An RNA of 177 nucleotides, treated with 2A3 and DMS and read out base by base. For 2A3 the reverse transcriptase was SuperScript II with manganese. The RNA was probed in 150 mM KOAc, 10 mM MgCl2 and 150 mM bicine (pH 8.5) at 24 C. The data come from the RNA Mapping Database (RMDB), library OK2TRN.
[RMDB]
RNA sequence: GGGAACGACUCGAGUAGAGUCGAAAAGAAAGGCAGCCACUGCAGCCCACGUAGCCACUCGAUGCAUGCUUUUGCAUGCCGCCCACGACUGAGGGCAGCUGCGGCACUGAGGGCAGCUGCCGAAAGAAUCCCGACUACUAUUCGUAGUAGUCGGGAUAAAAGAAACAACAACAACAAC
Reactivity to 2A3 in 0.01 (KOAc 150mM, MgCl2 10mM, bicine 150mM(pH8.5), 24C), signal-to-noise 2, nucleotides 027 to 126: g070a010a070a020g030g000c000a010g030c020c040a100c110u110g030c070a020g020c000c010c010a030c050g020u010a030g020c000c020a070c050u110c070g080a070u180g000c000a010u000g000c020u230u280u220u300g010c000a000u010g020c020c010g000c000c000c000a080c050g230a080c100u180g090a230g000g030g000c030a020g000c020u000g000c000g030g000c040a050c130u130g040a140g030g020g060c020a000g010c000u020g000c000c010g000a000a020a000g020a000
Reactivity to DMS in 0.01 (KOAc 150mM, MgCl2 10mM, bicine 150mM(pH8.5), 24C), signal-to-noise 2, nucleotides 027 to 126: g030a100a110a160g000g050c040a010g020c010c080a180c120u010g020c100a090g010c000c010c040a090c070g020u000a090g010c010c020a070c040u000c070g010a100u020g000c010a010u010g010c040u020u030u010u010g030c010a010u000g000c000c130g010c020c010c020a060c080g030a090c200u020g020a090g020g010g050c020a030g010c030u000g020c020g000g010c100a080c090u000g000a070g020g000g010c040a070g010c010u000g000c000c010g000a030a040a100g010a170